[RMDB]
RNA sequence: GGGAACGACUCGAGUAGAGUCGAAAAAUGAUGAAAGCUUAAAUCUUAAUUUAAAAGAUAUGUUUUCUGAAGUAUUUAAGCCGCAUACUAAAAACGAAGCAGAUGAAAUAUUUAUAGCGGGUACUGCAUACAUUGCCUCAUUCGUGAGGCAAUGUAUAAAAGAAACAACAACAACAAC
Reactivity to 2A3 in 0.01 (KOAc 150mM, MgCl2 10mM, bicine 150mM(pH8.5), 24C), signal-to-noise 2, nucleotides 027 to 126: a000u050g010a010u110g000a020a000a000g120c000u000u030a140a040a300u030c000u000u180a300a300u300u210u130a250a300a050a000g030a010u030a050u220g040u050u000u010u000c000u000g090a130a000g060u030a130u030u170u080a060a000g100c000c000g000c010a100u050a120c030u170a190a230a000a000a000c030g010a060a060g000c000a010g100a050u050g040a010a110a040u120a160u090u280u140a270u270a100g000c000g000g000g240u070a030c000u050g020c000
Reactivity to DMS in 0.01 (KOAc 150mM, MgCl2 10mM, bicine 150mM(pH8.5), 24C), signal-to-noise 1, nucleotides 027 to 126: a070u010g000a090u000g000a000a080a060g000c000u010u020a040a080a050u000c000u000u000a040a110u080u030u080a080a040a030a030g000a010u000a140u030g000u000u010u000u000c010u020g010a080a100g010u010a040u000u020u000a060a120g020c000c080g090c040a040u040a080c110u020a060a070a020a130a080c150g010a070a070g010c050a040g000a060u000g010a050a070a070u000a030u020u030u010a070u030a080g000c030g000g000g000u030a020c080u020g080c100

An RNA of 177 nucleotides, treated with 2A3 and DMS and read out base by base. The reactions ran in a buffer of 150 mM KOAc, 10 mM MgCl2 and 150 mM bicine (pH 8.5), at 24 C. For DMS, 1,480 sequencing reads were counted. For DMS the reverse transcriptase was MarathonRT. 2A3 adducts were read by reverse transcription with SuperScript II with manganese. It was measured as part of the RMDB library OK1LIB.